[RMDB]
Chemical mapping of a 207-nucleotide RNA with DMS and 2A3. For DMS the reverse transcriptase was MarathonRT. For 2A3, 1,642 sequencing reads were counted. Reactivities are given for positions 27 through 156.

RNA sequence: GGGAACGACUCGAGUAGAGUCGAAAAUGGAGCGAGUUCGCUCGCUCCAAAAAAAACCUUUGUGAUUACAUGACAUGCCACAAUUGUCCCAUUGGGACAAUGUGUGGCAACAGCAUGAAUCACUCUGGUAAAAAAGAUACGGAUUCGUCCGUAUCAAACUCUGAUAAAAGUUCGCUUUUAUCAGAGUAAAAGAAACAACAACAACAAC
Reactivity to DMS in 0.01 (KOAc 150mM, MgCl2 10mM, bicine 150mM(pH8.5), 24C), signal-to-noise 1, nucleotides 027 to 156: u010g030g010a000g030c020g010a010g030u000u010c300g020c020u000c020g020c000u000c010c010a000a010a000a100a180a020a090a020c000c000u000u000u000g020u010g000a040u000u010a030c000a010u000g000a120c130a300u000g020c000c000a010c010a060a010u000u010g000u000c000c010c000a300u000u010g080g010g000a000c000a000a000u000g020u000g070u000g000g000c000a000a000c010a070g020c000a000u020g010a110a030u000c000a010c010u010c040u000g000g000u000a000a050a080a060a070a100g000a020u000a010c010g030g030a040u000u000c300g020u000c000c000g010u000a000u000c010a020a050
Reactivity to 2A3 in 0.01 (KOAc 150mM, MgCl2 10mM, bicine 150mM(pH8.5), 24C), signal-to-noise 1, nucleotides 027 to 156: u070g010g010a000g010c000g000a000g030u150u080c130g080c150u040c000g030c000u040c010c050a010a010a000a020a060a040a030a020c000c000u010u010u020g000u000g000a000u010u050a090c000a000u010g100a110c030a050u020g000c010c000a000c010a000a020u000u000g000u000c000c000c080a190u160u300g020g010g030a000c000a010a000u100g070u000g000u000g070g000c000a000a000c010a000g000c020a000u000g000a000a000u000c000a000c000u010c000u000g000g000u080a120a080a000a000a060a040g030a000u000a000c000g020g030a010u070u060c180g080u000c070c000g000u000a020u000c000a000a000